[RMDB]
RNA sequence: GGGAACGACUCGAGUAGAGUCGAAAAGAUAUGGAUAUUGAACACAUAUGUAGCGAAGAACAUAAGUAUACGAUCGGAAACGAUCGUAUACUUAUGGGAGCUAGAUAUGUUCCCAAUAUCCUAAGUCCAUAAAUAUACGCUUCGGCGUAUAUUUAUGAAAAGAAACAACAACAACAAC
Reactivity to 2A3 in 0.01 (KOAc 150mM, MgCl2 10mM, bicine 150mM(pH8.5), 24C), signal-to-noise 1, nucleotides 027 to 126: g070a040u130a090u280g010g000a000u000a020u020u050g140a270a010c020a010c000a040u040a000u220g260u120a050g000c050g240a300a030g050a140a020c000a000u000a000a000g000u000a010u010a010c000g000a000u000c030g070g010a160a080a030c000g000a000u000c000g000u000a020u010a000c000u000u000a000u010g000g000g010a000g040c000u020a000g030a020u000a000u010g020u040u000c020c000c000a000a000u000a000u000c000c000u010a100a040g020u000c000
Reactivity to DMS in 0.01 (KOAc 150mM, MgCl2 10mM, bicine 150mM(pH8.5), 24C), signal-to-noise 4, nucleotides 027 to 126: g010a090u000a300u010g010g010a010u000a010u000u010g000a150a160c220a040c010a010u000a010u010g000u010a020g000c000g010a110a150g030a160a190c000a000u010a000a020g000u010a010u000a000c000g010a010u000c010g010g000a120a130a220c010g000a010u000c000g000u000a000u000a000c000u010u000a000u000g010g000g000a110g010c000u000a000g010a000u010a010u000g000u000u010c200c160c010a030a020u000a000u000c000c010u000a030a140g010u010c020